[RMDB]
RNA sequence: GGGAACGACUCGAGUAGAGUCGAAAAGGCGACAAGUUCGCUUGUCGCCACGGGGUCCAGCCUGGAAAGGCUGGAGGUAUUGGAAUCGUCGGGCCGCCAUUCAACGCGGGACAUUCGUGUCCCGCAAUAACUGGAUUCAGUUCGCUGAAUCCAGUUAAAAAGAAACAACAACAACAAC
Reactivity to 2A3 in 0.01 (KOAc 150mM, MgCl2 10mM, bicine 150mM(pH8.5), 24C), signal-to-noise 1, nucleotides 027 to 126: g010g010c010g010a000c000a010a010g010u040u070c170g070c150u000u000g000u010c000g000c000c000a000c010g010g000g010g000u030c000c000a000g000c000c030u060g120g170a230a100a000g010g010c010u000g020g020a000g050g030u100a120u070u170g060g040a050a020u040c020g080u030c040g040g020g050c010c030g040c000c020a020u100u050c020a030a130c140g020c010g000g030g030a000c010a010u020u110c230g050u080g030u040c020c000c000g020c000a010a010
Reactivity to DMS in 0.01 (KOAc 150mM, MgCl2 10mM, bicine 150mM(pH8.5), 24C), signal-to-noise 2, nucleotides 027 to 126: g010g030c010g010a030c000a010a020g000u010u010c260g000c000u000u000g000u010c000g000c010c000a020c130g000g000g000g000u000c010c000a020g030c000c000u000g010g030a110a090a040g000g010c000u000g000g000a000g010g000u000a100u010u010g010g020a050a050u010c160g000u000c030g010g000g000c010c030g020c060c030a050u010u000c080a050a120c230g010c000g000g000g000a000c000a030u010u010c160g010u000g030u000c000c000c000g020c010a000a010